[RMDB]
RNA sequence: GGGAACGACUCGAGUAGAGUCGAAAACAGCUAGUCCCUCUCACUAAUUGCUGCAACCACUCUCAAGUUUCCUACUGUACUGAGCUUUCCUGCAUGCAUGAUACUGGCUGUGUCAUCUGCGAGCAAAGGUAUAUUACCAUUUCGAUGGUAAUAUACCAAAAGAAACAACAACAACAAC
Reactivity to DMS in 0.01 (KOAc 150mM, MgCl2 10mM, bicine 150mM(pH8.5), 24C), signal-to-noise 9, nucleotides 027 to 126: c050a050g010c040u000a060g010u000c020c020c010u000c050u000c050a110c100u010a070a100u000u010g010c030u000g010c040a080a100c070c040a080c060u000c030u000c070a080a100g010u000u000u000c030c020u000a070c070u000g010u000a050c050u000g000a070g010c050u000u000u000c020c020u000g010c040a050u000g010c070a030u000g000a040u000a050c030u000g010g000c100u000g010u000g000u000c040a030u000c040u000g010c020g010a110g020c140a060a090a110
Reactivity to 2A3 in 0.01 (KOAc 150mM, MgCl2 10mM, bicine 150mM(pH8.5), 24C), signal-to-noise 9, nucleotides 027 to 126: c010a010g030c030u050a010g070u040c000c030c000u020c000u010c010a070c020u100a080a110u110u090g020c020u030g010c020a040a030c020c020a030c020u040c000u020c040a060a080g010u010u060u050c010c010u040a080c030u070g020u070a040c020u040g030a020g030c000u030u040u020c010c010u020g010c010a040u110g010c020a020u050g020a000u050a060c010u050g130g010c050u050g020u010g010u030c010a030u000c010u040g040c030g060a060g040c080a080a100a040
This 177-nucleotide RNA was probed chemically with DMS and 2A3. For 2A3 the reverse transcriptase was SuperScript II with manganese.